[RMDB]
RNA sequence: GGGAACGACUCGAGUAGAGUCGAAAAAUAGUUUUCCAGAUAUGGGAAUUUAUUACGAGUGUCCCCAUGUCGGGUGUACUAUGAAAACAAAGAGUCGCAAGGAAUACAUAGCUCACAGGAAAACGCACAUAUGGAGGUAGUUCGCUACCUCCAUAUGAAAAGAAACAACAACAACAAC
Reactivity to 2A3 in 0.01 (KOAc 150mM, MgCl2 10mM, bicine 150mM(pH8.5), 24C), signal-to-noise 7, nucleotides 027 to 126: a000u150a020g010u000u000u010u020c010c010a020g010a010u010a010u000g000g000g090a040a060u100u190u090a250u170u190a180c190g060a060g130u120g060u120c000c000c000c020a000u000g010u000c020g050g020g000u010g000u000a000c000u000a000u030g050a050a060a030a010c060a020a090a020g110a030g100u100c070g040c180a060a020g060g010a070a030u120a120c010a000u010a010g000c010u010c020a020c000a020g020g000a020a020a000a000c010g020c020a060
Reactivity to DMS in 0.01 (KOAc 150mM, MgCl2 10mM, bicine 150mM(pH8.5), 24C), signal-to-noise 6, nucleotides 027 to 126: a060u030a050g010u000u000u000u010c000c010a160g000a000u010a000u000g000g000g000a100a020u020u020u020a070u050u040a130c230g000a080g020u010g010u020c110c000c000c000a020u010g010u000c000g010g010g000u000g000u010a090c010u000a000u000g000a120a050a060a080c090a060a110a120g000a220g000u030c100g010c130a090a080g010g000a090a030u030a060c010a010u010a020g000c080u000c010a020c010a300g000g010a020a010a020a030c040g010c190a170
This 177-nucleotide RNA was probed chemically with 2A3 and DMS. The DMS profile rests on 13,592 reads. It was measured as part of the RMDB library OK1LIB. Reactivities are given for positions 27 through 126.